Record summary:
The record gives the reactivity of an RNA of 207 nucleotides to DMS.

[RMDB]
RNA sequence: GGGAACGACUCGAGUAGAGUCGAAAAUCAAUCGCAUUGUUGGGGGAAAGUUGGAGGAUAAAUCCUCACCAAGAUUUAAAUUAAGCAAGAGAUAUAAGGCCGCUCCUUAUAUUGCGACUUGCUUAAAGAUAUCCGGCAAAGUUCGCUUUGCCGGAAACUUAAGAACAGUCUUCGGACUGUUCUUAAGAAAAGAAACAACAACAACAAC
Reactivity to DMS in 0.01 (KOAc 150mM, MgCl2 10mM, bicine 150mM(pH8.5), 24C), signal-to-noise 1, nucleotides 027 to 156: u000c090a050a220u000c090g000c100a290u000u010g010u000u000g000g000g020g000g000a040a160a140g020u010u000g010g030a130g000g000a090u000a070a100a130u030c010c030u000c020a140c070c060a060a060g010a120u000u010u000a060a090a260u000u000a000a020g000c000a010a040g030a300g000a030u000a010u000a010a040g000g040c110c300g010c250u000c000c000u000u020a010u010a010u000u010g000c010g040a050c020u000u020g040c000u000u010a000a030a080g000a200u000a130u010c000c010g010g000c000a000a040a070g050u010u000c290g020c030u000u010u010g010c080c010g050g000a010a020a030

Conditions: 150 mM KOAc, 10 mM MgCl2 and 150 mM bicine (pH 8.5), 24 C. Source: RMDB library M2RFPK, as collected in RNAgym.